[RMDB]
RNA sequence: GGGAACGACUCGAGUAGAGUCGAAAACGUUGCACAAAACACUGUACUGAGUAGGUUAUCCAAGACACUCGAUCCAAAUGCUUCUGGAACUUCUUUAACACACUCGAUCAAAUUAGUUAAAGUUAUUAACCGGGGACUUGCCUAUGCAAUAAGAGACUAGGUAUAUAUCAUUCGUGAUAUAUACCUAAAAAGAAACAACAACAACAAC
Reactivity to DMS in 0.01 (KOAc 150mM, MgCl2 10mM, bicine 150mM(pH8.5), 24C), signal-to-noise 3, nucleotides 027 to 156: c080g000u000u000g020c010a120c090a080a100a090a110c040a120c040u010g020u000a070c020u000g020a060g020u000a080g050g030u000u000a070u000c060c050a090a100g020a090c050a090c030u000c040g010a080u000c030c040a080a120a110u000g010c030u000u010c060u000g020g000a070a120c050u000u000c010u000u000u000a030a070c030a100c080a080c060u020c070g030a090u000c040a050a070a150u010u010a070g020u000u000a050a030a090g000u020u000a070u000u010a020a070c020c000g030g000g040g010a080c040u000u000g010c020c020u000a100u000g020c010a040a050u010a080a100g000a170g000a110c170
Reactivity to 2A3 in 0.01 (KOAc 150mM, MgCl2 10mM, bicine 150mM(pH8.5), 24C), signal-to-noise 6, nucleotides 027 to 156: c030g030u030u080g030c030a030c010a070a100a120a010c050a060c050u090g070u140a060c030u060g030a010g060u050a050g060g060u090u100a060u120c050c030a050a000g060a030c020a030c050u050c040g030a070u050c030c020a050a100a110u090g030c010u040u080c030u080g060g010a060a060c020u070u040c000u030u050u040a030a000c040a010c010a040c080u080c060g080a130u120c130a100a190a210u150u100a070g010u020u040a060a020a010g000u040u070a110u120u120a110a040c040c010g000g000g000g010a010c020u020u060g010c000c010u040a040u090g010c020a040a090u060a170a060g040a000g000a060c080
Chemical mapping of a 207-nucleotide RNA with DMS and 2A3. It was measured as part of the RMDB library OK3TST. DMS (dimethyl sulfate) methylates the pairing face of unpaired adenines and cytosines.